An RNA of 177 nucleotides, treated with 2A3 and DMS and read out base by base.
For 2A3 the reverse transcriptase was SuperScript II with manganese.
The reactions ran in a buffer of 150 mM KOAc, 10 mM MgCl2 and 150 mM bicine (pH 8.5), at 24 C.
Reactivities are given for positions 27 through 126.
The 2A3 profile rests on 1,322 reads.
RNA sequence: GGGAACGACUCGAGUAGAGUCGAAAAAUAAGCCUCGGGGAGCUGUCAACCGAGCUGAGAUCCGAGGAUGUCCGAAUGGGGAAACCCAGCCACAGUGAUGUGUGGUUACCCGCGCCUGAAUAUAUAGUAUCUCAAACCAUUUCGAUGGUUUGAGAUAAAAAGAAACAACAACAACAAC
Reactivity to 2A3 in 0.01 (KOAc 150mM, MgCl2 10mM, bicine 150mM(pH8.5), 24C), signal-to-noise 2, nucleotides 027 to 126: a010u180a120a050g060c000c000u000c000g050g010g000g000a010g030c010u020g110u190c050a070a000c030c020g080a000g020c000u120g130a000g000a010u000c000c000g000a000g010g000a020u020g070u000c020c030g030a080a130u090g000g000g060g030a000a040a060c000c000c000a000g000c000c000a060c000a110g020u070g150a150u100g070u000g000u010g050g000u020u120a010c010c000c020g000c010g020c000c010u030g130a160a010u160a000u140a010u050a140g090
Reactivity to DMS in 0.01 (KOAc 150mM, MgCl2 10mM, bicine 150mM(pH8.5), 24C), signal-to-noise 4, nucleotides 027 to 126: a090u010a100a130g000c000c000u000c000g010g010g010g000a020g040c020u000g010u010c080a080a150c160c080g000a010g020c010u010g010a140g010a010u010c000c000g010a020g000g000a030u020g010u010c040c040g020a070a080u020g000g020g000g010a090a100a120c010c010c010a100g000c020c030a020c020a040g000u020g030a130u030g000u000g020u000g010g000u000u010a060c040c020c000g000c070g010c040c050u000g000a100a100u040a090u010a080u020a110g010